[RMDB]
RNA sequence: GGGAACGACUCGAGUAGAGUCGAAAAGAAGCAGUCCUUAUUGUGUGUGAUGUUUAGUCAUCGCACUGUCCCUACGGGCUGCCAACGUAGGUCCAAUGUGCCGAGAGGCACUAGAAGUACGGCUUAUUAUGAGGCAUCGCCGUACCAACGAUGCUGACGAUAGUCCGUGAUUCGUCACGGACUAUCGAAAAGAAACAACAACAACAAC
Reactivity to DMS in 0.01 (KOAc 150mM, MgCl2 10mM, bicine 150mM(pH8.5), 24C), signal-to-noise 1, nucleotides 027 to 156: g000a080a060g040c000a010g000u010c020c000u000u000a060u000u010g060u020g030u000g010u020g010a090u000g000u000u010u050a300g030u000c010a010u000c000g030c000a030c050u000g010u000c000c010c000u000a190c120g020g000g020c000u000g050c000c090a010a120c030g010u000a000g010g000u000c050c000a090a190u000g050u020g040c030c000g010a300g000a300g020g000c000a000c040u000a050g030a010a100g030u010a020c010g010g030c070u000u000a150u040u020a060u010g060a230g050g000c000a010u000c060g010c020c050g000u010a060c140c010a020a020c000g010a030u000g000c010u010g020a210
Reactivity to 2A3 in 0.01 (KOAc 150mM, MgCl2 10mM, bicine 150mM(pH8.5), 24C), signal-to-noise 3, nucleotides 027 to 156: g110a050a020g030c000a000g020u000c000c030u090u140a160u140u190g150u040g000u000g000u010g050a010u010g080u070u230u210a290g120u070c000a000u000c000g000c000a000c010u020g080u040c020c000c000u040a040c050g000g000g000c010u020g010c000c020a050a060c050g110u090a020g120g000u030c030c010a060a020u120g000u000g000c000c020g000a000g010a040g020g000c000a000c000u010a010g030a100a010g020u080a020c030g000g010c010u040u040a040u060u050a090u300g110a060g020g000c020a010u030c010g000c050c010g050u040a030c010c000a040a010c020g010a000u040g000c060u040g040a010

Background: Chemical mapping of a 207-nucleotide RNA with DMS and 2A3. For DMS the reverse transcriptase was MarathonRT. It was measured as part of the RMDB library OK3TST. The reactions ran in a buffer of 150 mM KOAc, 10 mM MgCl2 and 150 mM bicine (pH 8.5), at 24 C. For 2A3 the reverse transcriptase was SuperScript II with manganese.